The record gives the reactivity of an RNA of 177 nucleotides to DMS and 2A3.

[RMDB]
RNA sequence: GGGAACGACUCGAGUAGAGUCGAAAAUCGACCUUCCACCUUACGGUGUCGCCGACGAGGACGUCGCGCACCACUUCGCCGCCCUGAAGCUCGAUGUCGCACACCUGCAGCGGCGAGCAGACGACGGCAUAGGGUCCCGGUUCGCCGGGACCCUAUGAAAAGAAACAACAACAACAAC
Reactivity to DMS in 0.01 (KOAc 150mM, MgCl2 10mM, bicine 150mM(pH8.5), 24C), signal-to-noise 1, nucleotides 027 to 126: u000c090g000a110c010c020u000u010c020c030a090c130c000u000u020a010c170g050g010u000g000u040c040g020c150c030g000a020c010g040a220g000g060a110c050g020u000c020g020c060g020c000a090c040c020a080c060u030u000c040g000c010c000g030c190c080c140u000g030a080a040g000c000u000c010g000a090u070g000u000c050g000c090a130c120a130c190c090u020g000c120a090g170c030g000g050c000g050a020g000c060a000g030a300c130g000a250c060g010g000
Reactivity to 2A3 in 0.01 (KOAc 150mM, MgCl2 10mM, bicine 150mM(pH8.5), 24C), signal-to-noise 3, nucleotides 027 to 126: u040c000g010a010c000c000u010u080c050c070a160c010c040u130u130a060c130g010g020u030g140u180c080g000c200c050g020a040c000g020a110g220g180a170c040g030u040c000g000c000g000c010a010c000c010a030c020u120u060c060g020c020c000g020c040c000c040u050g040a000a000g000c010u040c000g140a130u140g040u100c010g030c030a070c000a050c090c050u020g050c040a040g020c000g000g000c000g000a000g000c000a010g000a010c030g020a000c020g050g000
Overview:
Reactivities are given for positions 27 through 126. The reactions ran in a buffer of 150 mM KOAc, 10 mM MgCl2 and 150 mM bicine (pH 8.5), at 24 C. For 2A3, 1,272 sequencing reads were counted. It was measured as part of the RMDB library OK1LIB. For DMS, 1,202 sequencing reads were counted.